[RMDB]
RNA sequence: GGGAACGACUCGAGUAGAGUCGAAAAGGUGAACUGGGGGUCUUGGUGGGCAACACUGCUCUCCUGGGGCCUAAGUGGCCACAUCUGCCCACAGGUGCAGUGAGUGGGGCCCGUGCACCAUGGAGAGGGCAUUCUCCAAAUUCGUUUGGAGAAUGCCAAAAGAAACAACAACAACAAC
Reactivity to DMS in 0.01 (KOAc 150mM, MgCl2 10mM, bicine 150mM(pH8.5), 24C), signal-to-noise 2, nucleotides 027 to 126: g030g030u010g000a060a140c150u000g020g000g000g040g000u010c060u000u000g020g020u000g000g000g050c040a060a130c150a050c150u000g020c010u000c030u000c020c000u010g000g020g030g020c010c190u000a080a050g010u000g010g000c010c060a130c020a050u010c030u000g000c000c000c050a080c160a110g000g000u000g000c050a020g020u000g000a200g040u000g010g000g010g000c030c010c030g000u020g030c030a030c040c010a060u010g000g000a020g000a030g010
Reactivity to 2A3 in 0.01 (KOAc 150mM, MgCl2 10mM, bicine 150mM(pH8.5), 24C), signal-to-noise 1, nucleotides 027 to 126: g070g000u110g000a110a070c130u110g000g000g000g000g010u050c070u090u060g010g000u080g060g000g000c000a080a010c020a030c080u150g060c000u000c020u000c020c010u010g000g040g000g000c000c020u050a090a040g120u270g070g010c000c000a020c000a030u060c010u000g000c010c050c050a240c090a140g070g030u140g040c010a000g010u060g190a130g000u090g060g050g020g050c000c000c000g020u080g010c000a010c000c000a000u160g000g000a010g010a020g000
An RNA of 177 nucleotides, treated with DMS and 2A3 and read out base by base. In probing experiments dimethyl sulfate is read out at A N1 and C N3, which are open when not base-paired.